An RNA of 177 nucleotides, treated with 2A3 and DMS and read out base by base. DMS (dimethyl sulfate) methylates the pairing face of unpaired adenines and cytosines.

RNA sequence: GGGAACGACUCGAGUAGAGUCGAAAAUGCAUUUGCUAUGCAACAGAAAGUACUACGUCGUACAUUAAACCGUGAUGGUGCUGUAGGUCUAGCUUUGCUAAUGGUAGCGCAAAUGCCAGCAGCUAUGCCUUCCAAACUGUUUCGACAGUUUGGAAGGAAAAGAAACAACAACAACAAC
Reactivity to 2A3 in 0.01 (KOAc 150mM, MgCl2 10mM, bicine 150mM(pH8.5), 24C), signal-to-noise 9, nucleotides 027 to 126: u150g000c010a020u010u020u090g010c040u070a030u140g060c010a050a020c010a070g080a040a120a000g040u060a060c010u020a030c120g100u060c030g070u090a030c020a030u150u180a150a130a060c020c020g090u120g150a130u250g020g020u040g030c030u020g020u060a060g000g120u010c020u010a030g000c000u060u050u080g080c020u040a070a090u110g120g030u050a030g040c030g000c080a020a020a040u060g010c020c000a040g040c020a010g020c030u090a060u220g060
Reactivity to DMS in 0.01 (KOAc 150mM, MgCl2 10mM, bicine 150mM(pH8.5), 24C), signal-to-noise 4, nucleotides 027 to 126: u030g020c010a030u010u010u000g020c040u020a040u010g020c000a060a090c140a050g000a070a030a050g000u010a040c000u000a030c190g010u000c060g000u020a040c020a090u020u020a060a120a060c010c010g020u020g020a170u030g030g000u000g040c130u010g000u000a020g010g010u010c010u000a020g020c030u000u000u000g000c020u000a110a100u010g040g010u000a050g010c160g020c060a030a030a050u010g000c010c170a070g060c130a080g020c060u000a040u010g000
Record summary
Reactivities are given for positions 27 through 126. Conditions: 150 mM KOAc, 10 mM MgCl2 and 150 mM bicine (pH 8.5), 24 C. It was measured as part of the RMDB library OK1LIB.